Chemical mapping of a 177-nucleotide RNA with 2A3 and DMS. 2A3 is a SHAPE reagent: it acylates the 2'-hydroxyl of flexible nucleotides of all four kinds. The 2A3 profile rests on 1,778 reads.

[RMDB]
RNA sequence: GGGAACGACUCGAGUAGAGUCGAAAACACGAUCAUCGCCGCGCUGUCGGAGUCUCCCUCCUCGAACACCUUGCCGAUGUGUUUCAUCGAGAUCAUCGACGGUGCCGCGUCGGGGCUCAUCGACACCACAUUCCGAUCGUUUCGACGAUCGGAAUGUAAAAGAAACAACAACAACAAC
Reactivity to 2A3 in 0.01 (KOAc 150mM, MgCl2 10mM, bicine 150mM(pH8.5), 24C), signal-to-noise 2, nucleotides 027 to 126: c040a040c070g050a070u090c030a010u020c030g040c060c000g000c030g050c090u060g040u100c040g020g040a020g030u020c060u010c060c020c000u050c030c020u040c020g060a030a020c000a000c030c030u050u230g040c000c020g070a070u040g070u010g030u060u090u060c060a170u110c020g020a010g010a060u080c040a040u100c040g000a000c010g010g030u040g020c030c000g070c020g030u010c000g010g030g000g030c000u030c010a050u040c060g010a010c020a010c080c000
Reactivity to DMS in 0.01 (KOAc 150mM, MgCl2 10mM, bicine 150mM(pH8.5), 24C), signal-to-noise 2, nucleotides 027 to 126: c090a100c060g010a050u000c080a060u000c040g000c020c050g020c080g000c030u010g010u000c020g010g000a150g030u010c010u000c010c020c010u000c040c060u010c020g030a030a120c080a040c040c040u010u010g030c050c100g020a020u000g010u000g020u000u000u000c030a160u040c160g010a040g010a040u000c040a140u000c000g000a030c040g010g020u010g000c080c110g000c150g030u010c110g020g040g000g000c060u010c080a070u000c020g020a070c110a080c110c120